The data come from the RNA Mapping Database (RMDB), library RFM100. Structure probing data (DMS and 2A3) for a 177-nucleotide construct. The DMS profile rests on 2,829 reads. DMS adducts were read by reverse transcription with MarathonRT. The RNA was probed in 150 mM KOAc, 10 mM MgCl2 and 150 mM bicine (pH 8.5) at 24 C.
RNA sequence: GGGAACGACUCGAGUAGAGUCGAAAAAGAGCGGCAUGAAAGAGAGAGAGAGAGAGAGACACGCCUGAAUGGCAGCAGCAGGCCUUAGCGGCAAUGGACAGCAGGCACAGGACCAGCUUUGCCUCGAGUAUCUGCUUGACUUCGGUCAAGCAGAUACAAAAGAAACAACAACAACAAC
Reactivity to DMS in 0.01 (KOAc 150mM, MgCl2 10mM, bicine 150mM(pH8.5), 24C), signal-to-noise 2, nucleotides 027 to 126: a030g010a090g020c090g060g000c070a140u000g010a120a110a030g000a070g000a080g000a010g000a030g010a040g050a040g000a020g040a050g000a020c090a050c090g000c010c000u000g000a060a010u060g000g030c040a050g010c080a070g000c020a070g000g000c030c060u040u030a110g030c060g000g000c040a070a030u000g010g010a050c160a050g010c080a070g000g000c030a030c040a040g010g010a160c100c090a000g010c040u000u000u000g000c040c000u000c080g010a230
Reactivity to 2A3 in 0.01 (KOAc 150mM, MgCl2 10mM, bicine 150mM(pH8.5), 24C), signal-to-noise 2, nucleotides 027 to 126: a000g060a020g020c000g030g000c050a040u110g060a070a090a010g070a030g040a010g000a000g000a000g000a000g000a000g000a010g000a000g020a010c030a020c070g030c020c000u010g120a080a080u110g000g020c000a000g000c020a000g020c000a020g030g010c020c020u030u090a050g010c070g000g050c000a030a030u070g020g040a030c030a010g020c020a020g030g100c010a010c030a090g060g000a050c000c000a000g030c000u010u080u120g050c020c000u000c010g000a010